[RMDB]
RNA sequence: GGGAACGACUCGAGUAGAGUCGAAAAUCUAUUGCUAAUGAAUACAAGGUUAACUUUACUGUAUCAGAGGACCAACUUGCGCCCUCUACCCCUAUCGAUAUCAGUAAUGAAUUAAAUUCAUUGAAUCGCUUCCUCUUAUAUUCGUAUAAGAGGAAGCAAAAGAAACAACAACAACAAC
Reactivity to DMS in 0.01 (KOAc 150mM, MgCl2 10mM, bicine 150mM(pH8.5), 24C), signal-to-noise 4, nucleotides 027 to 126: u000c030u000a090u010u010g010c130u010a040a000u000g000a020a030u000a120c200a070a110g010g010u000u000a090a110c050u000u000u000a010c010u000g010u010a010u010c030a100g010a060g020g000a020c020c040a170a160c300u010u000g010c130g020c000c000c000u000c010u000a190c080c020c020c070u000a130u010c150g000a030u000a010u020c020a010g010u000a010a010u000g000a080a070u010u000a040a050a130u000u000c000a020u000u000g000a060a080u000c170
Reactivity to 2A3 in 0.01 (KOAc 150mM, MgCl2 10mM, bicine 150mM(pH8.5), 24C), signal-to-noise 4, nucleotides 027 to 126: u030c030u040a110u050u240g050c030u100a020a030u020g010a010a000u070a070c060a060a100g140g010u130u090a160a020c000u050u000u050a030c020u020g000u000a010u020c040a020g010a010g020g000a030c020c030a030a150c160u150u160g020c070g010c070c030c010u020c010u060a140c010c030c010c040u060a090u190c050g020a020u010a010u160c010a000g000u040a020a010u010g040a000a010u020u050a040a060a020u000u000c000a000u030u010g080a050a050u090c030
This 177-nucleotide RNA was probed chemically with DMS and 2A3. The data come from the RNA Mapping Database (RMDB), library OK2TST. The reactions ran in a buffer of 150 mM KOAc, 10 mM MgCl2 and 150 mM bicine (pH 8.5), at 24 C. For DMS the reverse transcriptase was MarathonRT. 2A3 adducts were read by reverse transcription with SuperScript II with manganese. For 2A3, 3,079 sequencing reads were counted.